Record summary: This 177-nucleotide RNA was probed chemically with DMS and 2A3. Conditions: 150 mM KOAc, 10 mM MgCl2 and 150 mM bicine (pH 8.5), 24 C.
RNA sequence: GGGAACGACUCGAGUAGAGUCGAAAAACUAACUCAUUCUGGGGUAAUUCUAUGUAUCAUUAUCCUCUGGGGGUGGGGCAGCGUUUUAGAGUGUUAACAUUUGACUCCAAGGAGGUUUAAUGCAGACUACCUUUCUAUCUUUCGAGAUAGAAAGGUAAAAAGAAACAACAACAACAAC
Reactivity to DMS in 0.01 (KOAc 150mM, MgCl2 10mM, bicine 150mM(pH8.5), 24C), signal-to-noise 5, nucleotides 027 to 126: a070c070u010a070a100c060u000c040a070u000u000c080u000g020g010g000g010u010a060a050u000u000c080u010a090u010g010u010a090u010c070a050u000u000a030u000c020c000u000c140u010g010g000g010g000g030u000g010g010g000g010c080a050g010c110g000u000u000u010u000a090g010a060g010u000g010u000u000a090a060c060a080u000u000u000g000a060c030u000c030c040a080a170g010g000a050g000g010u000u000u000a030a040u000g000c130a150g010a090c190
Reactivity to 2A3 in 0.01 (KOAc 150mM, MgCl2 10mM, bicine 150mM(pH8.5), 24C), signal-to-noise 2, nucleotides 027 to 126: a000c010u040a010a000c000u010c070a050u210u050c070u120g040g000g040g000u080a080a040u150u040c080u110a150u110g120u030a070u100c020a010u040u100a010u050c000c010u040c030u040g050g000g000g030g010u010g000g030g010g000c030a030g030c000g040u030u010u040u250a030g030a010g010u030g020u060u110a060a000c010a070u000u010u200g030a030c000u000c000c010a050a040g080g000a010g080g000u050u110u120a020a020u050g010c020a010g040a080c030
It was measured as part of the RMDB library OK2TST.